[RMDB]
RNA sequence: GGGAACGACUCGAGUAGAGUCGAAAAGAUAUGGAAUCUCUCUUCCGAUCGAGGAUCGGACUUCGGAAACGAAGUCCGGGAGAUCGAAGAGAGGAUUCCUAAGUCAAAACACCUGUUCGCAGGUGAACAUUGAACAUUCCUUCGGGAAUGUUCAAUGAAAAGAAACAACAACAACAAC
Reactivity to DMS in 0.01 (KOAc 150mM, MgCl2 10mM, bicine 150mM(pH8.5), 24C), signal-to-noise 2, nucleotides 027 to 126: g000a050u000a300u010g010g000a020a030u010c000u000c010u000c000u000u000c100c080g030a000u000c000g030a180g010g000a040u020c010g000g000a000c000u000u000c000g020g000a100a130a290c000g010a020a010g000u000c000c000g000g010g000a020g000a000u000c000g010a010a010g000a010g000a020g020g020a010u000u000c000c010u010a010a100g000u010c020a100a130a190a280c000a010c000c000u000g010u010u010c260g020c020a010g010g000u000g000a070a240
Reactivity to 2A3 in 0.01 (KOAc 150mM, MgCl2 10mM, bicine 150mM(pH8.5), 24C), signal-to-noise 2, nucleotides 027 to 126: g020a020u120a030u230g000g010a010a030u000c020u000c000u000c000u040u000c270c140g000a010u020c020g060a300g020g010a070u030c000g030g010a000c010u000u000c000g020g030a090a070a060c030g000a010a000g000u030c000c000g020g030g000a000g010a010u010c010g000a000a010g020a000g000a010g010g010a010u020u000c000c000u000a100a020g060u020c050a050a010a140a120c010a000c000c000u030g080u110u110c300g000c080a000g000g000u020g030a050a000